The record gives the reactivity of an RNA of 177 nucleotides to DMS and 2A3.

RNA sequence: GGGAACGACUCGAGUAGAGUCGAAAAUGCAGACAAAGUCCGUGAGUCGAUGUGUGCUGCUAAAGUUAUUAAAUUAGAGACUGUUCUAAAGACUAGGGCCUUCUUCCAUACUAUCUUAAUCAAUGGGCUCUACCACGUGUUUCGACACGUGGUAGAGAAAAGAAACAACAACAACAAC
Reactivity to DMS in 0.01 (KOAc 150mM, MgCl2 10mM, bicine 150mM(pH8.5), 24C), signal-to-noise 2, nucleotides 027 to 126: u030g020c040a030g010a060c080a110a090a030g000u010c050c040g050u000g000a090g030u010c020g010a170u030g010u010g000u020g020c090u020g000c000u010a040a090a000g020u040u030a060u000u020a020a090a210u070u010a050g000a110g000a100c080u000g000u030u000c020u030a080a050a080g000a110c080u010a100g020g010g020c030c080u010u020c030u000u020c020c030a040u020a080c130u010a030u010c010u000u000a060a070u030c180a040a030u000g000g000g010
Reactivity to 2A3 in 0.01 (KOAc 150mM, MgCl2 10mM, bicine 150mM(pH8.5), 24C), signal-to-noise 4, nucleotides 027 to 126: u070g000c010a000g010a010c030a040a110a010g030u000c010c020g150u230g100a060g000u110c060g030a120u100g110u010g070u130g070c000u000g000c000u010a030a010a090g030u060u010a070u120u260a110a120a060u100u080a030g000a000g060a060c040u100g050u100u010c040u130a090a110a000g030a100c030u050a020g090g000g000c010c020u010u050c040u060u050c010c010a020u020a110c030u040a150u160c090u100u180a100a060u090c120a020a140u120g060g010g020

The data come from the RNA Mapping Database (RMDB), library OK1LIB. DMS adducts were read by reverse transcription with MarathonRT.